[RMDB]
RNA sequence: GGGAACGACUCGAGUAGAGUCGAAAAGAAGGUCGCCACUGGUGUUAUGUUAGAUUGCGGUUUGGAGCGCAUCUACAAUGUUGUAGGCCCCAGAGCUGGUAAACACGCACCAGAACUUUUGCGUAAAUGACCUUAUGUACUUCGGUACAUAAGGUCAAAAAGAAACAACAACAACAAC
Reactivity to DMS in 0.01 (KOAc 150mM, MgCl2 10mM, bicine 150mM(pH8.5), 24C), signal-to-noise 3, nucleotides 027 to 126: g010a130a050g030g010u000c080g010c030c150a260c030u000g010g010u000g010u000u000a090u000g010u010u010a060g020a160u000u010g010c000g020g010u000u000u000g000g000a060g020c070g030c060a090u030c020u010a020c050a070a140u000g010u010u010g020u010a090g030g000c020c010c000c020a070g000a080g020c010u000g010g000u000a050a050a030c030a050c300g020c010a020c020c000a010g000a060a100c110u000u010u000u010g000c110g010u030a060a070a180
Reactivity to 2A3 in 0.01 (KOAc 150mM, MgCl2 10mM, bicine 150mM(pH8.5), 24C), signal-to-noise 2, nucleotides 027 to 126: g030a090a000g060g030u100c030g090c100c000a100c030u000g080g000u000g050u160u140a110u140g010u010u010a010g030a220u060u240g000c010g000g140u060u090u160g120g020a150g020c080g000c000a070u090c000u040a020c030a080a210u210g050u260u060g070u260a010g020g030c020c020c000c000a010g020a010g040c030u100g000g100u050a070a020a050c060a000c100g000c010a000c020c030a000g000a010a010c030u000u070u170u200g050c040g040u100a070a090a150